[RMDB]
RNA sequence: GGGAACGACUCGAGUAGAGUCGAAAAAUUCAGGAGAGUAGAUGAUUCGCGUUAAGUGUGUGUGAAUGGGAUGUCGUCACACAACGAAGCGAGAGCGCGGUGAAUCAUUGCAUCGGCUCCAAACGAAUCACAUGAUUAGCUUCGGCUAAUCAUGUGAAAAAGAAACAACAACAACAAC
Reactivity to 2A3 in 0.01 (KOAc 150mM, MgCl2 10mM, bicine 150mM(pH8.5), 24C), signal-to-noise 1, nucleotides 027 to 126: a000u050u050c040a020g010g000a020g010a020g040u080a020g020a050u020g010a000u000u000c010g020c010g010u040u070a140a060g040u080g020u000g010u000g000u020g070a200a090u080g000g090g060a060u060g250u240c030g010u030c010a000c010a010c000a020a030c020g020a050a010g020c040g020a020g010a000g050c060g000c000g050g000u020g030a000a010u040c010a000u010u020g040c020a020u030c020g070g010c020u000c010c000a030a020a040c090g060a050a030
Reactivity to DMS in 0.01 (KOAc 150mM, MgCl2 10mM, bicine 150mM(pH8.5), 24C), signal-to-noise 2, nucleotides 027 to 126: a120u010u000c040a120g000g000a030g010a090g000u010a210g000a020u010g010a030u000u000c000g000c000g020u010u000a030a120g010u010g000u010g000u000g000u000g000a060a070u000g010g030g020a050u010g000u020c090g010u000c000a000c000a000c000a020a030c020g010a090a070g030c030g010a180g000a130g030c000g010c030g000g020u000g000a010a010u000c020a000u000u000g010c070a090u010c020g000g000c000u000c000c000a070a070a070c180g010a070a080